[RMDB]
RNA sequence: GGGAACGACUCGAGUAGAGUCGAAAACAUGCAUUUGAAUCAGUAUGACUCACGAGAUUAUAUCGAUGCAUUCAAAGUAUUUAUCCAUCACGUUGCCCUGCAUGUCAGUCAUAGAAAAGAUUUGAAGGGAAUUAUCAGCGUUCGCGCUGAUAAUUCCAAAAGAAACAACAACAACAAC
Reactivity to 2A3 in 0.01 (KOAc 150mM, MgCl2 10mM, bicine 150mM(pH8.5), 24C), signal-to-noise 1, nucleotides 027 to 126: c000a160u130g000c000a120u040u000u040g230a000a000u060c030a030g060u030a090u030g050a010c110u000c000a000c030g030a170g140a130u230u130a140u000a110u160c140g060a000u050g060c030a020u050u130c010a070a000a000g000u000a270u060u100u000a000u160c030c000a000u200c070a000c000g000u090u000g100c000c000c000u000g000c060a000u040g040u000c000a060g000u000c000a030u060a110g120a030a000a000a000g110a180u140u140u140g060a090a140g020